Description
An RNA of 177 nucleotides, treated with DMS and read out base by base.
[RMDB]
RNA sequence: GGGAACGACUCGAGUAGAGUCGAAAAACAUUAAGUUUCGACUUAAUGUAAACCCGAUGAAGCGGCACAUACGGAGCUUCAUACAUCAAAGAGUGCAAAUAAAAAGUUGAUCCUUCGGGAUCAACAAGAUUAUGCUCAUCUUCGGAUGAGCAUAAUCAAAAGAAACAACAACAACAAC
Reactivity to DMS in 0.01 (KOAc 150mM, MgCl2 10mM, bicine 150mM(pH8.5), 24C), signal-to-noise 2, nucleotides 027 to 126: a010c010a000u000u000a000a000g040u010u000u010c240g020a010c000u020u000a010a000u000g010u000a040a150a130c000c000c000g010a050u010g010a000a000g020c030g000g000c020a020c030a140u000a100c060g000g010a140g000c000u000u000c010a030u000a040c130a130u000c190a030a030a060g010a050g020u000g030c040a180a080a090u000a030a060a080a120a090g020u000u000g000a020u000c000c010u000u030c220g000g000g020a010u000c000a000a000c000a050a080
Background:
For DMS the reverse transcriptase was MarathonRT. The data come from the RNA Mapping Database (RMDB), library M2PK50.